[RMDB]
The record gives the reactivity of an RNA of 207 nucleotides to 2A3 and DMS. The data come from the RNA Mapping Database (RMDB), library ARCHII. The DMS profile rests on 1,684 reads. For 2A3 the reverse transcriptase was SuperScript II with manganese.
RNA sequence: GGGAACGACUCGAGUAGAGUCGAAAAAGGAUGUAGAAGAUCAUAACAUGAGUGAUUCGGCAGAUUUGGAUUCAUAUAUAUAUCCACCCAUGUGGUACUUCAUUCUACGAUAUAUAUAAGAUCCAUCUGUAUAGAUAUCAUCAUCUACAUCCAGAAACAUUUAGAGUCGGUUCGCCGACUCUAAAUGAAAAGAAACAACAACAACAAC
Reactivity to 2A3 in 0.01 (KOAc 150mM, MgCl2 10mM, bicine 150mM(pH8.5), 24C), signal-to-noise 3, nucleotides 027 to 156: a010g000g010a000u000g000u010a000g020a160a020g040a110u160c070a100u130a160a100c050a080u110g020a020g150u080g000a020u010u020c020g030g000c010a000g020a060u150u230u290g060g000a020u100u080c050a000u000a010u000a010u000a010u000a000u110c040c020a040c040c020c030a060u220g120u290g050g000u050a090c060u120u260c040a230u160u150c050u100a050c060g000a000u000a000u000a000u000a000u000a040a070g000a000u000c000c010a010u010c000u010g000u040a190u120a150g020a010u070a000u030c000a000u000c010a000u020c000u000a000c000a000u000c000c000a020g000a000a040a010
Reactivity to DMS in 0.01 (KOAc 150mM, MgCl2 10mM, bicine 150mM(pH8.5), 24C), signal-to-noise 1, nucleotides 027 to 156: a090g030g000a010u000g000u020a030g010a010a170g000a130u010c080a170u000a150a170c120a300u000g000a180g000u000g000a080u000u000c030g010g000c010a030g000a020u000u020u020g050g000a020u020u000c040a180u000a030u010a090u000a030u000a020u010c040c040a130c100c070c020a130u040g040u000g000g000u000a110c100u020u010c080a100u000u000c110u010a170c100g000a060u000a020u000a060u000a020u000a030a140g000a020u000c010c020a030u000c020u000g010u010a060u020a100g020a040u000a060u000c020a030u010c050a100u000c000u000a010c000a000u000c000c010a040g000a110a040a120